[RMDB]
RNA sequence: GGGAACGACUCGAGUAGAGUCGAAAACCCGGGCGCUCCCCUCGGAGAUCCACUGGGUGGGUUCACAUCCCCAACCCGCGGGCCGGCUGUUCUUCUUUCUCUUUCCUCGUCUUCCUCGGUCAACCUCAUGCGAAACGCUUCGGCGUUUCGAAAAGAAACAACAACAACAAC
Reactivity to DMS in 0.01 (KOAc 150mM, MgCl2 10mM, bicine 150mM(pH8.5), 24C), signal-to-noise 2, nucleotides 027 to 129: c030c010c020g050g030g000c110g050c080u040c000c000c000c000u000c090g000g000a140g050a000u000c020c070a150c200u020g030g010g040u050g030g010g020u020u040c160a070c220a230u030c130c010c050c070a000a010c080c030c050g040c070g000g050g060c060c070g000g060c000u030g000u000u000c050u000u010c050u000u000u000c020u020c040u000u000u050c000c060u020c030g010u000c050u000u000c070c020u050c020g000g000u010c070a000a000c050c010u010c100a080u000g010
Reactivity to 2A3 in 0.01 (KOAc 150mM, MgCl2 10mM, bicine 150mM(pH8.5), 24C), signal-to-noise 4, nucleotides 027 to 129: c000c000c000g000g010g000c060g010c020u040c030c000c010c000u000c000g020g000a050g000a090u010c010c020a050c140u140g000g030g000u030g010g020g000u130u090c080a040c000a140u080c000c000c000c000a030a180c000c020c010g030c030g000g010g010c020c010g010g010c030u020g060u020u010c020u050u010c000u010u050u000c010u000c000u020u060u030c010c020u010c000g030u000c020u070u030c020c020u010c010g010g000u040c020a020a110c000c030u070c060a030u160g020